[RMDB]
RNA sequence: GGGAACGACUCGAGUAGAGUCGAAAAGCUCCUUCAGGUGAACGAUCUCGGUUGUUUCUCUCAAGGCAUGAUCACCCCGUCCGAUGCGGAAGUUCGUGCUUCCGUCGAACGCGAAAGUCGGACGGCGAAAACGAGUUACCGUUCGCGGUAACUCGAAACUUAUUCGUUUCUUCGGAAACGAAUAAGUAAAAGAAACAACAACAACAAC
Reactivity to DMS in 0.01 (KOAc 150mM, MgCl2 10mM, bicine 150mM(pH8.5), 24C), signal-to-noise 1, nucleotides 027 to 156: g020c030u000c010c030u010u010c100a070g020g010u000g010a040a020c040g000a080u000c000u010c090g020g040u000u010g000u000u010u000c020u010c020u000c060a070a080g000g090c080a060u000g000a060u000c000a200c020c000c000c010g030u000c000c010g050a020u000g000c000g030g050a020a040g000u000u000c240g050u010g000c010u010u000c010c020g010u000c030g000a120a080c080g060c140g050a120a050a120g010u010c000g040g020a010c040g040g000c060g010a050a080a110a200c060g000a070g020u010u000a010c000c000g000u010u000c300g020c000g000g040u000a000a000c030u000c010g010a000a010
Reactivity to 2A3 in 0.01 (KOAc 150mM, MgCl2 10mM, bicine 150mM(pH8.5), 24C), signal-to-noise 4, nucleotides 027 to 156: g030c040u030c010c000u030u110c070a020g000g060u030g050a080a050c030g010a040u010c050u070c160g050g000u000u000g000u010u010u000c050u000c000u040c040a040a030g040g030c050a090u110g070a060u080c040a050c000c030c020c000g010u000c000c000g010a010u040g020c030g000g000a000a020g020u110u300c220g110u300g050c000u020u000c010c000g030u050c010g110a150a070c080g010c050g160a100a050a010g020u010c000g000g000a000c000g000g000c000g030a040a040a000a010c020g000a000g000u010u000a000c010c010g010u050u080c270g000c000g110g000u000a000a000c000u000c000g000a000a000

An RNA of 207 nucleotides, treated with DMS and 2A3 and read out base by base.
It was measured as part of the RMDB library M2RFPK.
The RNA was probed in 150 mM KOAc, 10 mM MgCl2 and 150 mM bicine (pH 8.5) at 24 C.
The 2A3 profile rests on 2,449 reads.
2A3 adducts were read by reverse transcription with SuperScript II with manganese.